[RMDB]
RNA sequence: GGGAACGACUCGAGUAGAGUCGAAAAGACGGACGGAGGCGACACACAAGUAACCGCUUUCCCGCGCCGCACCGCGAGCCACGGGAUGUGACUCCACCCUGAGCCUGUUGCCCAACUCCUGCUCAACGAUAUAGCUGAGGUUCGCCUCAGCUAUAUCAAAAGAAACAACAACAACAAC
Reactivity to DMS in 0.01 (KOAc 150mM, MgCl2 10mM, bicine 150mM(pH8.5), 24C), signal-to-noise 4, nucleotides 027 to 126: g010a120c040g000g010a100c050g020g030a100g020g020c000g020a110c100a080c130a130c220a060a100g000u000a090a120c130c030g010c030u010u000u010c030c010c040g000c200g010c070c020g000c060a100c110c060g020c050g020a040g010c080c020a070c050g000g000g000a090u000g020u000g000a070c020u010c020c070a070c030c020c030u010g000a090g020c020c030u010g020u010u000g000c010c000c020a100a140c110u000c040c020u000g010c040u000c070a060a150c190
Reactivity to 2A3 in 0.01 (KOAc 150mM, MgCl2 10mM, bicine 150mM(pH8.5), 24C), signal-to-noise 3, nucleotides 027 to 126: g060a020c020g040g010a010c010g010g030a020g010g050c040g040a010c020a010c020a000c050a190a070g050u060a100a060c040c020g040c040u080u080u030c030c010c030g000c110g010c010c010g020c010a070c050c060g060c020g020a020g000c020c030a030c040g030g050g050a070u080g050u040g100a050c000u000c000c000a030c000c000c010u040g010a010g020c030c020u080g040u090u110g040c020c000c010a000a030c030u040c020c010u040g000c000u000c050a030a070c080

The record gives the reactivity of an RNA of 177 nucleotides to DMS and 2A3. The RNA was probed in 150 mM KOAc, 10 mM MgCl2 and 150 mM bicine (pH 8.5) at 24 C. Source: RMDB library OK2TST, as collected in RNAgym. For DMS, 3,234 sequencing reads were counted. The 2A3 profile rests on 5,792 reads.